[RMDB]
RNA sequence: GGGAACGACUCGAGUAGAGUCGAAAAGUUCGCGGUAGCUGAGGUCAACGGCGUCGAGACCGGCCGUUUGCCCGUCGCCAACGUCGUGGUGACCCCGGCCCACGAAGCCGUGGUGCGGGUGGGCACCGCCCAUCGGAUACUUCGGUAUCCGAUGGGCAAAAGAAACAACAACAACAAC
Reactivity to 2A3 in 0.01 (KOAc 150mM, MgCl2 10mM, bicine 150mM(pH8.5), 24C), signal-to-noise 2, nucleotides 027 to 126: g030u020u030c010g000c030g040g030u070a050g010c020u010g020a020g000g000u020c020a000a010c010g000g040c020g030u060c020g010a020g000a030c020c000g010g010c050c100g210u060u100u300g010c000c020c020g010u020c030g050c170c010a020a020c030g020u020c000g010u050g140g200u100g030a040c020c000c000c000g050g000c010c000c000a020c010g010a030a030g100c080c020g030u070g000g010u110g000c090g040g080g130u170g020g060g000c010a010c010c030
Reactivity to DMS in 0.01 (KOAc 150mM, MgCl2 10mM, bicine 150mM(pH8.5), 24C), signal-to-noise 2, nucleotides 027 to 126: g000u020u000c030g010c050g000g030u020a080g010c020u000g010a030g010g010u010c070a080a030c020g010g010c000g010u000c120g010a300g000a040c030c300g020g000c010c300g020u010u010u010g000c030c010c180g000u000c050g000c210c060a060a010c030g010u010c020g000u020g010g030u010g000a030c020c000c010c010g010g010c010c020c000a020c020g000a050a070g020c040c060g040u010g010g020u000g040c030g020g010g050u000g000g000g020c030a040c140c060
An RNA of 177 nucleotides, treated with 2A3 and DMS and read out base by base. Reactivities are given for positions 27 through 126. For 2A3 the reverse transcriptase was SuperScript II with manganese. It was measured as part of the RMDB library OK2TST. Conditions: 150 mM KOAc, 10 mM MgCl2 and 150 mM bicine (pH 8.5), 24 C. DMS adducts were read by reverse transcription with MarathonRT.